Annotation
Structure probing data (DMS and 2A3) for a 177-nucleotide construct. The RNA was probed in 150 mM KOAc, 10 mM MgCl2 and 150 mM bicine (pH 8.5) at 24 C. It was measured as part of the RMDB library OK1LIB.
[RMDB]
RNA sequence: GGGAACGACUCGAGUAGAGUCGAAAAGAAGAAGAUUAUCUAGGUCUAAGACCUUGUUUCAAACUAACAAGGGCGCAUGGAGGAAGGCCGGACCUCCAUACUUAGACAAGCGCGAUCCGGCCAAGAAAAAUAUGGUAGUCUUCGGACUACCAUAUUUAAAAGAAACAACAACAACAAC
Reactivity to DMS in 0.01 (KOAc 150mM, MgCl2 10mM, bicine 150mM(pH8.5), 24C), signal-to-noise 5, nucleotides 027 to 126: g010a120a090g010a060a090g020a120u040u030a070u020c050u000a080g000g020u000c000u010a000a010g000a260c000c010u000u000g010u010u000u010c160a150a110a160c300u050a010a000c010a010a000g000g010g010c170g030c260a060u010g020g000a020g000g010a080a060g010g010c000c000g020g010a030c040c000u000c000c010a020u010a030c030u000u000a010g000a040c020a050a130g030c190g000c100g010a070u000c000c010g000g020c000c020a040a010g010a000a080
Reactivity to 2A3 in 0.01 (KOAc 150mM, MgCl2 10mM, bicine 150mM(pH8.5), 24C), signal-to-noise 7, nucleotides 027 to 126: g100a030a000g040a030a040g030a040u180u160a070u290c090u100a060g060g040u010c000u000a000a010g000a020c010c010u000u000g010u000u020u070c260a250a200a080c070u070a000a000c010a000a000g010g010g000c070g010c080a010u040g020g000a010g010g030a120a230g010g000c010c020g010g010a040c010c000u000c000c000a000u030a060c010u000u000a000g010a010c020a040a030g150c110g040c060g090a030u010c000c000g000g000c000c000a000a000g010a000a120